RNA sequence: GGGAACGACUCGAGUAGAGUCGAAAAUGGCCGUGACGUGGUGGAAUAGGAAUGGACCGACAACAAGCACAGUUCACUAUCCGAAGGUAUAUAAAACUUAUUUCGAAAAAGUCGAAAGGUUAAAACAGAAUCAAUGAUGAUUCGUCAUCAUUGAUUCAAAAGAAACAACAACAACAAC
Reactivity to DMS in 0.01 (KOAc 150mM, MgCl2 10mM, bicine 150mM(pH8.5), 24C), signal-to-noise 5, nucleotides 027 to 126: u010g020g000c030c040g010u010g010a090c080g020u010g020g020u000g010g000a070a070u000a090g010g010a110a090u000g010g000a080c050c000g000a090c120a050a060c110a050a100g020c090a090c060a080g020u010u000c050a060c080u010a080u000c060c010g010a100a050g010g010u000a030u010a140u010a060a070a050a030c020u000u010a120u010u000u000c010g010a020a170a100a070a130g020u000c020g010a010a010a050g010g000u010u010a030a060a070a090c240a120
Reactivity to 2A3 in 0.01 (KOAc 150mM, MgCl2 10mM, bicine 150mM(pH8.5), 24C), signal-to-noise 4, nucleotides 027 to 126: u060g060g000c020c000g040u050g010a030c020g030u050g010g060u030g010g050a060a090u050a120g040g060a040a090u110g040g020a020c030c020g030a030c030a100a020c020a040a030g070c050a020c020a070g010u070u040c030a050c040u040a080u020c010c010g040a060a020g020g020u040a070u000a000u020a110a160a010a010c000u060u070a110u080u070u010c000g040a070a080a010a090a170g100u000c010g000a020a010a020g050g010u040u080a070a210a020a020c070a030